[RMDB]
RNA sequence: GGGAACGACUCGAGUAGAGUCGAAAAGAUAUGGAAUAGGGUGGGACAUGACGGGAUUCGGAAACGAAUCUUCAACAGCCCACUCUAUUCCUAAGUCAAAACUACCAUGACUUCGGUCAUGGUAGAAGCCAAAGAUAAAGUUCGCUUUAUCUUUGGCAAAAGAAACAACAACAACAAC
Reactivity to DMS in 0.01 (KOAc 150mM, MgCl2 10mM, bicine 150mM(pH8.5), 24C), signal-to-noise 5, nucleotides 027 to 126: g010a030u000a300u000g010g000a010a000u000a000g000g010g010u000g010g000g010a100c090a070u000g010a220c300g000g000g010a020u000u000c000g010g000a070a090a140c010g010a010a000u000c000u000u010c050a060a290c110a050g000c000c000c000a010c000u000c000u000a000u000u000c000c000u000a000a040g000u010c020a030a060a070a170c010u000a000c000c000a000u000g000a010c000u000u010c240g020g010u000c010a000u000g000g000u010a010g010a030a100
Reactivity to 2A3 in 0.01 (KOAc 150mM, MgCl2 10mM, bicine 150mM(pH8.5), 24C), signal-to-noise 3, nucleotides 027 to 126: g010a010u040a030u080g000g000a000a000u000a010g000g020g010u020g040g000g000a160c180a300u140g030a030c060g040g000g000a010u020u000c000g020g010a030a030a020c000g000a010a000u000c000u230u120c020a110a070c030a030g050c010c000c010a000c000u010c000u000a000u000u010c000c000u000a000a000g000u000c000a000a010a010a030c000u000a000c000c010a000u000g000a000c000u050u080c300g120g000u000c000a000u010g000g000u010a000g000a000a010

This 177-nucleotide RNA was probed chemically with DMS and 2A3. The RNA was probed in 150 mM KOAc, 10 mM MgCl2 and 150 mM bicine (pH 8.5) at 24 C. For 2A3 the reverse transcriptase was SuperScript II with manganese. Values cover nucleotides 27 to 126. It was measured as part of the RMDB library TTRDEL. The 2A3 profile rests on 10,288 reads.